[RMDB]
RNA sequence: GGGAACGACUCGAGUAGAGUCGAAAACAUCUAGUAGCUGGUUCCCUCCGAAGUUUCCCUCAGGAUAGCUGGAGCCCAUUACGAGUUCUAUCGGGUAAAGCCAAUGAUUAGAGGCAUCGGGGGCGCAUCAAAAAAGUUUGUUCGCAAACUUUUUUGAAAAAGAAACAACAACAACAAC
Reactivity to DMS in 0.01 (KOAc 150mM, MgCl2 10mM, bicine 150mM(pH8.5), 24C), signal-to-noise 1, nucleotides 027 to 126: c050a140u000c080u020a050g050u020a050g010c050u000g030g000u010u000c060c010c000u010c040c030g010a100a100g000u000u000u000c060c030c230u000c090a090g000g000a120u020a070g000c030u020g040g010a300g010c010c020c000a110u010u010a140c130g020a120g010u010u010c050u000a010u010c060g030g020g010u000a090a150a110g010c060c010a080a170u000g010a060u000u000a080g000a070g030g010c060a090u000c000g000g000g020g020g050c060g040c100a020